[RMDB]
RNA sequence: GGGAACGACUCGAGUAGAGUCGAAAAAAACAGAUGUGAGGAUGAUCUUAUUCUAAGAGCUGUGCAUUGUGUUCCAGCCCCAGGUUGUCUGAUACUUUCCUUUCUUAUCUCCCACCUGGCUCAUGGCCUCUCCUGCAUCAGUAGUGCCUGCUGUGGGCGUGUAAUCAAAGUUCGCUUUGAUUACACGAAAAGAAACAACAACAACAAC
Reactivity to 2A3 in 0.01 (KOAc 150mM, MgCl2 10mM, bicine 150mM(pH8.5), 24C), signal-to-noise 4, nucleotides 027 to 156: a010a000a000c100a050g060a090u100g010u060g050a040g040g030a030u060g030a040u020c040u060u130a130u230u100c080u190a130a030g000a030g060c030u010g000u070g020c030a110u150u100g050u030g030u130u070c030c010a020g010c030c000c000c010a020g040g010u020u010g040u040c070u030g010a030u040a200c020u070u070u090c030c000u060u070u110c040u070u160a100u080c080u040c030c000c010a030c010c030u020g010g010c010u050c080a100u090g030g020c010c010u040c010u030c020c020u040g030c010a060u040c000a130g050u090a020g020u040g060c010c000u020g020c040u030g000u040g020g000g000
Reactivity to DMS in 0.01 (KOAc 150mM, MgCl2 10mM, bicine 150mM(pH8.5), 24C), signal-to-noise 2, nucleotides 027 to 156: a050a010a040c020a080g020a060u030g010u010g000a120g030g000a090u000g010a070u000c030u010u010a090u010u000c110u000a100a070g010a060g040c000u000g020u000g020c030a110u000u000g020u010g010u000u000c120c010a100g030c030c000c020c020a110g010g010u000u000g000u010c040u000g020a200u010a040c100u010u000u000c020c010u000u010u010c040u010u000a110u000c070u000c000c010c020a140c060c040u000g020g020c040u010c030a050u010g020g000c020c020u000c030u000c010c040u020g000c040a090u000c040a080g000u000a110g030u000g030c010c000u040g000c030u020g020u000g030g010g040